Structure probing data (2A3) for a 177-nucleotide construct.

RNA sequence: GGGAACGACUCGAGUAGAGUCGAAAAUCUGCUUGCAUGCUCCCAUGGGCUGGCUCCUGCUUGCAGUCCCAGCUUCCGGAAUGAGAGGGAGAGCGCAGCAUCUGGCUCCACACGAUCAUCCAGUACACGAUGCGGGCAUGUUCGCAUGCCCGCAUCGAAAAGAAACAACAACAACAAC
Reactivity to 2A3 in 0.01 (KOAc 150mM, MgCl2 10mM, bicine 150mM(pH8.5), 24C), signal-to-noise 1, nucleotides 027 to 126: u010c010u020g000c010u050u250g020c070a070u210g010c000u060c000c010c060a040u110g000g010g020c000u000g000g000c030u040c060c000u060g040c000u080u140g010c020a000g100u080c040c000c030a000g000c000u130u150c040c000g000g140a150a130u190g020a130g060a090g160g000g000a030g000a000g040c070g000c020a010g000c000a030u000c020u060g000g000c000u020c020c000a000c000a040c070g010a040u000c000a010u000c000c000a020g040u030a030c030a060

The RNA was probed in 150 mM KOAc, 10 mM MgCl2 and 150 mM bicine (pH 8.5) at 24 C.